[RMDB]
Structure probing data (2A3 and DMS) for a 177-nucleotide construct. Values cover nucleotides 27 to 126. 2A3 adducts were read by reverse transcription with SuperScript II with manganese. The RNA was probed in 150 mM KOAc, 10 mM MgCl2 and 150 mM bicine (pH 8.5) at 24 C. DMS adducts were read by reverse transcription with MarathonRT.

RNA sequence: GGGAACGACUCGAGUAGAGUCGAAAAUUGACAGCCUGCGACGCAAGCCCUCUAGCAAGAUGCAGGCCGGAGCCUGUGUCUCGUUCCCUGGGGCGAUAGCUCUUGCUGGCAGGUCUUGCAGUGUCCACCAAAUAUCCCGUUUCGACGGGAUAUUUGGAAAAGAAACAACAACAACAAC
Reactivity to 2A3 in 0.01 (KOAc 150mM, MgCl2 10mM, bicine 150mM(pH8.5), 24C), signal-to-noise 5, nucleotides 027 to 126: u080u080g050a030c020a020g020c010c000u050g030c040g040a010c050g000c000a010a020g010c010c020c010u000c030u050a020g040c020a030a020g000a000u060g020c000a010g040g010c010c030g150g030a070g000c010c000u030g010u030g020u010c020u010c070g020u020u000c010c000c000u020g000g010g000g020c020g010a090u160a040g030c020u020c000u040u050g000c010u020g030g020c060a000g010g000u020c040u040u020g010c020a040g020u010g030u090c020c010a030
Reactivity to DMS in 0.01 (KOAc 150mM, MgCl2 10mM, bicine 150mM(pH8.5), 24C), signal-to-noise 3, nucleotides 027 to 126: u010u010g010a130c070a050g010c020c010u000g010c060g000a110c090g000c020a020a040g000c070c000c030u000c070u020a050g010c050a080a020g020a010u000g010c000a030g000g000c010c240g000g010a100g010c000c010u000g000u010g010u000c020u000c020g000u000u000c010c010c000u010g000g000g010g020c070g010a110u020a080g010c050u000c020u010u010g020c010u000g000g030c100a000g000g000u010c010u020u000g000c010a100g000u020g010u020c010c100a270